[RMDB]
RNA sequence: GGGAACGACUCGAGUAGAGUCGAAAAGAUAUGGAUCCGCGGUGGGAGCGUGAUGGUCGGAAACGACCAUGACGCGAAGAACACCCGGAUCCUAAGUCAAAGCGAACGAACUUCGGUUCGUUCGCAACUUCUAAGAAUUGUUCGCAAUUCUUAGAAGAAAAGAAACAACAACAACAAC
Reactivity to 2A3 in 0.01 (KOAc 150mM, MgCl2 10mM, bicine 150mM(pH8.5), 24C), signal-to-noise 3, nucleotides 027 to 126: g010a000u010a000u050g000g010a010u000c030c040g080c300g020g010u020g000g020g100a300g010c000g010u090g220a000u000g000g000u000c000g010g030a000a000a020c010g010a000c000c010a000u000g040a000c010g000c020g070a090a040g060a010a010c000a000c000c000c010g000g010a000u010c000c000u000a000a000g000u000c020a100a140a030g020c010g010a010a000c020g010a000a000c010u070u130c300g090g000u010u000c000g010u010u000c000g000c000a000a010
Reactivity to DMS in 0.01 (KOAc 150mM, MgCl2 10mM, bicine 150mM(pH8.5), 24C), signal-to-noise 3, nucleotides 027 to 126: g000a000u000a010u010g000g000a000u000c000c000g010c300g050g010u000g020g020g010a050g020c000g060u010g010a010u000g000g010u000c010g010g010a010a010a020c000g020a010c000c000a000u000g010a010c000g020c000g000a080a110g010a160a250c010a010c000c000c020g010g000a000u000c000c000u000a000a050g000u000c010a110a100a160g000c010g010a020a000c000g000a020a010c000u000u020c240g030g010u000u010c000g010u000u000c010g000c000a010a020